[RMDB]
RNA sequence: GGGAACGACUCGAGUAGAGUCGAAAAGAACACACGUUCACUCGAGUGUUCGAACGUACGAGUGAACGUACACUCGUGUACUCACGAACUCGUGAGAGAGAUCGUACGAGUGUGUUCACGAGAUCACUCGUGUACGAGAGAACGAUCUCACGUGUGAAUUGAUACGCGAUUUCGAUCGCGUAUCAAUAAAAGAAACAACAACAACAAC
Reactivity to DMS in 0.01 (KOAc 150mM, MgCl2 10mM, bicine 150mM(pH8.5), 24C), signal-to-noise 4, nucleotides 027 to 156: g000a100a180c050a120c050a050c000g020u000u010c040a060c030u000c020g000a230g020u000g000u000u000c110g010a090a140c050g000u000a110c030g000a050g040u000g030a080a130c080g000u000a020c020a070c010u000c030g000u000g010u010a130c030u010c030a090c010g000a090a130c130u010c010g030u010g010a070g000a080g000a140g010a070u020c030g050u000a050c030g020a040g030u000g010u000g020u000u000c030a070c090g010a100g030a150u000c150a120c020u000c000g030u000g000u000a060c060g020a100g010a300g020a090a100c040g000a040u000c000u000c020a060c120g010u000g000u010g010a120
Reactivity to 2A3 in 0.01 (KOAc 150mM, MgCl2 10mM, bicine 150mM(pH8.5), 24C), signal-to-noise 9, nucleotides 027 to 156: g130a080a030c050a000c000a010c060g010u040u030c030a010c030u020c020g040a050g030u100g070u200u160c100g030a100a030c020g040u180a060c020g010a010g030u010g010a030a010c010g010u030a000c010a000c000u000c000g000u040g040u140a100c020u010c010a020c000g090a300a100c070u090c220g000u020g000a010g000a010g000a000g010a020u030c030g010u000a010c010g000a010g020u000g010u020g000u030u050c020a010c030g040a040g010a090u160c080a080c220u000c010g030u040g030u050a020c030g010a010g000a000g020a160a020c010g020a030u020c000u020c010a020c050g090u100g020u020g080a070
This 207-nucleotide RNA was probed chemically with DMS and 2A3.
It was measured as part of the RMDB library OK3TST.
Values cover nucleotides 27 to 156.
2A3 adducts were read by reverse transcription with SuperScript II with manganese.
For DMS the reverse transcriptase was MarathonRT.
The reactions ran in a buffer of 150 mM KOAc, 10 mM MgCl2 and 150 mM bicine (pH 8.5), at 24 C.